RNA sequence: GGGAACGACUCGAGUAGAGUCGAAAAGAUAUGGAAUGUGCAAUGGACAACAGCUUAUGUCGGAAACGACAUAAGACAUGUCCUUGCCAUUCCUAAGUCAAAACACUCUAAGUUCGCUUAGAGUGAACAUUAUGCGACACUUCGGUGUCGCAUAAUGAAAAGAAACAACAACAACAAC
Reactivity to DMS in 0.01 (KOAc 150mM, MgCl2 10mM, bicine 150mM(pH8.5), 24C), signal-to-noise 3, nucleotides 027 to 126: g010a070u000a300u000g000g000a000a010u000g010u000g040c010a000a010u020g040g020a010c000a030a130c300a240g000c010u000u000a000u000g010u010c000g020g000a130a090a180c000g040a020c000a000u000a010a010g000a020c100a140u020g020u000c000c000u000u000g000c000c000a000u000u000c000c000u000a010a050g010u030c010a130a060a210a140c000a000c010u000c000u000a010a000g020u000u030c300g000c000u000u000a000g000a010g000u010g000a020a110
Reactivity to 2A3 in 0.01 (KOAc 150mM, MgCl2 10mM, bicine 150mM(pH8.5), 24C), signal-to-noise 3, nucleotides 027 to 126: g040a020u100a020u160g000g020a010a020u010g210u170g030c020a030a110u300g000g000a020c020a180a010c000a220g050c010u000u010a000u010g000u000c000g020g050a080a070a090c000g000a010c000a020u020a000a030g000a000c010a060u100g000u010c000c010u020u010g000c000c000a000u010u000c010c000u000a050a030g020u000c030a000a030a130a090c000a000c010u000c000u020a010a040g010u060u200c250g170c170u000u000a000g000a000g000u000g010a030a000
The record gives the reactivity of an RNA of 177 nucleotides to DMS and 2A3. For 2A3, 4,935 sequencing reads were counted.